[RMDB]
RNA sequence: GGGAACGACUCGAGUAGAGUCGAAAAUGGUUAAGGAACUCGGCAAAUUAGCCCCGUAACUUCGGAAGAAGGGGUGCCUGCAGCGAUGCAGGCCGCAGAGAAAUGGCCCAACCGACUGUUUAUCAAAACUAAGACCGUUAUUCGUAACGGUCUUAGUAAAAGAAACAACAACAACAAC
Reactivity to DMS in 0.01 (KOAc 150mM, MgCl2 10mM, bicine 150mM(pH8.5), 24C), signal-to-noise 5, nucleotides 027 to 126: u030g010g000u010u010a090a090g000g010a120a120c050u010c060g000g010c020a090a100a130u020u040a110g000c010c000c000c040g010u010a100a150c070u010u020c080g020g040a120a090g010a070a070g000g000g010g020u010g010c000c000u010g000c000a000g000c300g000a170u010g000c000a020g000g000c020c250g000c030a030g000a050g020a060a070a090u030g000g010c000c000c070a070a100c030c000g000a090c140u000g010u010u000u000a120u020c060a080a070a090
Reactivity to 2A3 in 0.01 (KOAc 150mM, MgCl2 10mM, bicine 150mM(pH8.5), 24C), signal-to-noise 1, nucleotides 027 to 126: u200g020g020u090u040a040a050g050g000a060a070c000u010c010g010g000c060a100a120a110u130u110a160g030c000c000c000c000g030u050a110a100c060u030u110c150g070g030a080a000g010a040a020g010g000g010g020u060g020c010c010u020g000c010a050g000c030g040a030u020g000c010a020g000g000c000c010g040c030a070g000a010g000a060a200a010u190g050g000c030c000c030a000a030c030c000g020a030c070u010g150u060u090u080a300u250c060a000a000a090